An RNA of 177 nucleotides, treated with DMS and 2A3 and read out base by base. For DMS, 5,833 sequencing reads were counted. The RNA was probed in 150 mM KOAc, 10 mM MgCl2 and 150 mM bicine (pH 8.5) at 24 C. It was measured as part of the RMDB library OK2TST. 2A3 adducts were read by reverse transcription with SuperScript II with manganese.
RNA sequence: GGGAACGACUCGAGUAGAGUCGAAAAGCGGCAACUUUAGAAAUCUCUCGUCUUAAAGAGCAACUGGCGAAAGUUCAGAAAGAUGCUCUGUUUGACAGUUUAUCUGGACUCUAUAACCGCCGAGCUACAUCGUAAUCGUAUUCGUACGAUUACGAUGAAAAGAAACAACAACAACAAC
Reactivity to DMS in 0.01 (KOAc 150mM, MgCl2 10mM, bicine 150mM(pH8.5), 24C), signal-to-noise 6, nucleotides 027 to 126: g010c010g000g010c040a050a060c150u000u000u000a020g000a040a130a140u000c030u000c100u020c150g030u000c020u010u000a040a050a040g000a020g020c020a080a200c030u000g000g010c010g000a110a070a130g010u000u010c010a030g000a100a080a100g000a110u000g000c040u000c010u000g000u000u000u000g000a050c000a060g010u010u000u000a080u030c120u010g000g000a050c130u000c040u000a020u000a080a070c150c090g010c010c020g000a120g030c120u000a130
Reactivity to 2A3 in 0.01 (KOAc 150mM, MgCl2 10mM, bicine 150mM(pH8.5), 24C), signal-to-noise 4, nucleotides 027 to 126: g050c020g030g000c010a050a010c020u050u070u030a040g050a080a200a150u020c080u010c000u040c090g040u010c030u060u090a120a130a010g020a010g000c000a020a070c030u030g020g010c010g080a270a110a040g020u120u090c010a010g060a070a140a010g090a030u060g000c010u000c010u030g110u050u100u060g040a020c010a020g010u060u090u110a170u050c090u070g040g010a020c010u010c010u030a040u020a120a050c010c020g020c010c010g010a020g040c040u050a040